[RMDB]
RNA sequence: GGGAACGACUCGAGUAGAGUCGAAAAUGGUUUUGCCAUACAAAUUGGGCUAUGGAGCGAGUAAUAGCAAGCAGCUUGUGUGGAAAAAUUAAAGUUUAAAACUCGGUUCUUAGUUCAGGCUGCAUAGGGGGUAGCAUUUAUUCGUAAAUGCUACCCCAAAAGAAACAACAACAACAAC
Reactivity to DMS in 0.01 (KOAc 150mM, MgCl2 10mM, bicine 150mM(pH8.5), 24C), signal-to-noise 1, nucleotides 027 to 126: u060g000g000u000u000u000u020g050c000c000a030u020a040c000a040a090a300u060u040g000g000g000c000u000a000u010g000g030a070g000c000g000a020g000u000a070a130u040a050g010c170a100a100g040c020a010g010c020u000u000g000u000g000u000g050g000a050a090a040a050a090u000u000a080a100a250g000u000u010u060a100a050a070a200c030u040c050g000g000u000u000c040u000u030a050g020u000u030c010a010g010g030c020u030g000c010a250u000a110g030
Reactivity to 2A3 in 0.01 (KOAc 150mM, MgCl2 10mM, bicine 150mM(pH8.5), 24C), signal-to-noise 1, nucleotides 027 to 126: u080g090g000u000u210u210u220g040c000c000a000u050a020c030a120a080a150u080u090g000g000g000c000u010a000u120g020g030a000g000c010g050a000g000u100a060a010u000a170g000c030a030a030g060c040a000g010c050u050u050g000u000g000u080g000g110a000a000a070a000a100u120u300a160a130a020g090u040u030u120a000a180a000a000c000u030c160g110g140u000u000c000u020u000a000g000u000u000c020a010g050g000c010u060g030c060a080u140a060g150
Chemical mapping of a 177-nucleotide RNA with DMS and 2A3. It was measured as part of the RMDB library OK1LIB. For 2A3, 371 sequencing reads were counted. The RNA was probed in 150 mM KOAc, 10 mM MgCl2 and 150 mM bicine (pH 8.5) at 24 C. The DMS profile rests on 1,302 reads.